[RMDB]
RNA sequence: GGGAACGACUCGAGUAGAGUCGAAAACUGUUUUUAGUAGAGACAAGGUUUCAUCUCGUCUUGAUCUCCUGAUCUCGUGAUCCACCCCACUCAGGCUCCCAAAGUGCUGGGAUUACAGGUGUGUGCCGUGUUAGGUACAGUUCGCUGUACCUAACACAAAAGAAACAACAACAACAAC
Reactivity to DMS in 0.01 (KOAc 150mM, MgCl2 10mM, bicine 150mM(pH8.5), 24C), signal-to-noise 2, nucleotides 027 to 126: c050u020g000u010u010u040u000u000a070g010u000a130g010a040g000a010c010a050a040g000g010u000u010u000c110a100u000c070u000c110g010u010c040u000u010g010a090u010c010u020c020c020u000g010a070u000c020u000c120g020u010g010a090u000c020c040a090c020c020c020c050a080c040u020c040a050g000g010c060u000c040c020c050a050a090a090g030u000g010c060u000g010g010g000a080u000u010a060c090a100g010g000u000g000u000g020u000g010c060c090
Reactivity to 2A3 in 0.01 (KOAc 150mM, MgCl2 10mM, bicine 150mM(pH8.5), 24C), signal-to-noise 1, nucleotides 027 to 126: c030u030g010u080u010u000u080u180a110g020u020a030g040a000g010a020c020a000a070g010g030u010u070u250c120a140u040c040u030c010g070u060c000u060u060g070a160u030c000u030c040c010u080g040a100u030c030u000c130g110u090g040a060u020c030c000a000c010c000c040c000a030c010u020c060a010g010g070c020u060c000c010c000a080a090a040g110u110g100c030u010g000g040g000a000u040u070a040c030a010g060g000u030g010u050g000u040g030c020c010